Record summary:
This 207-nucleotide RNA was probed chemically with DMS and 2A3. Source: RMDB library OK3TST, as collected in RNAgym. The reactions ran in a buffer of 150 mM KOAc, 10 mM MgCl2 and 150 mM bicine (pH 8.5), at 24 C. For 2A3, 3,998 sequencing reads were counted. For 2A3 the reverse transcriptase was SuperScript II with manganese.
RNA sequence: GGGAACGACUCGAGUAGAGUCGAAAACGUACGUGGAGACACGUACGACGAGACUUCGGUCUCGAAUCGCGCGAAGUUCUGCCGCGCGCGCGCGAGGCGUCGGUGGUCGGCGAGCCCACGGACGCAAAAACUCGCGCGUAAAUAAAUAGCAGGACAACUAUGGUAUCUAGUUCGCUAGAUACCAUAGAAAAGAAACAACAACAACAAC
Reactivity to DMS in 0.01 (KOAc 150mM, MgCl2 10mM, bicine 150mM(pH8.5), 24C), signal-to-noise 1, nucleotides 027 to 156: c010g010u000a020c000g010u000g000g020a300g000a300c020a010c000g020u000a000c000g000a100c050g000a180g040a010c000u000u000c260g020g030u010c000u020c010g010a090a060u000c040g000c000g030c010g010a180a090g000u000u000c010u000g070c000c030g010c000g080c000g000c070g010c020g030c000g000a040g040g020c040g030u010c000g010g070u000g030g020u000c040g050g010c060g030a260g020c150c010c010a040c000g000g010a040c020g060c110a030a000a040a140a210c000u000c000g040c000g070c010g000u000a020a060a100u000a040a040a030u020a070g030c030a050g000g000a030c010a020a140
Reactivity to 2A3 in 0.01 (KOAc 150mM, MgCl2 10mM, bicine 150mM(pH8.5), 24C), signal-to-noise 4, nucleotides 027 to 156: c010g010u000a010c000g010u020g000g030a050g010a030c000a000c000g000u000a000c000g020a020c010g000a000g010a000c020u130u150c300g100g000u000c010u000c000g040a080a120u110c030g000c010g000c000g050a300a080g010u010u010c000u010g000c000c000g000c000g010c010g010c020g000c000g000c000g020a000g020g000c000g000u000c060g140g010u020g000g020u040c040g020g140c160g050a030g010c010c010c000a000c030g060g000a000c000g000c010a090a050a020a020a010c000u000c000g000c010g000c010g000u000a000a000a000u240a000a000a000u010a000g000c000a000g010g000a000c000a000a010